[RMDB]
RNA sequence: GGGAACGACUCGAGUAGAGUCGAAAAGAUAUGGAGAUGUAUAGGCAACAGCUCCAGGUCGGAAACGACCUCGGAGACAUGCCUGGACAUCUCCUAAGUCAAACAAUCAUUCUUCGGAAUGAUUGAACCUAACAACCAAGUUCGCUUGGUUGUUAGGAAAAGAAACAACAACAACAAC
Reactivity to DMS in 0.01 (KOAc 150mM, MgCl2 10mM, bicine 150mM(pH8.5), 24C), signal-to-noise 4, nucleotides 027 to 126: g000a020u010a190u020g000g000a000g020a000u000g000u000a050u000a010g010g010c010a090a070c270a160g010c000u000c010c010a040g000g000u000c000g010g000a070a060a070c010g000a020c000c000u000c210g030g010a010g000a010c080a300u000g000c010c000u000g010g000a020c010a020u000c000u000c010c020u020a000a040g000u010c010a160a110a220c030a010a000u000c010a010u000u000c000u010u030c240g010g000a020a000u000g000a020u000u000g010a070a160
Reactivity to 2A3 in 0.01 (KOAc 150mM, MgCl2 10mM, bicine 150mM(pH8.5), 24C), signal-to-noise 3, nucleotides 027 to 126: g010a000u050a020u080g000g000a000g000a000u000g030u020a040u030a040g020g000c100a300a020c080a300g000c010u000c000c020a000g000g000u010c000g000g000a040a020a010c000g010a000c020c030u020c120g000g010a000g010a010c030a130u300g000c000c000u010g000g020a010c020a000u010c010u000c000c010u010a000a000g020u010c030a100a080a100c010a020a000u010c000a000u010u000c000u060u060c300g160g000a020a010u000g000a000u010u000g000a010a010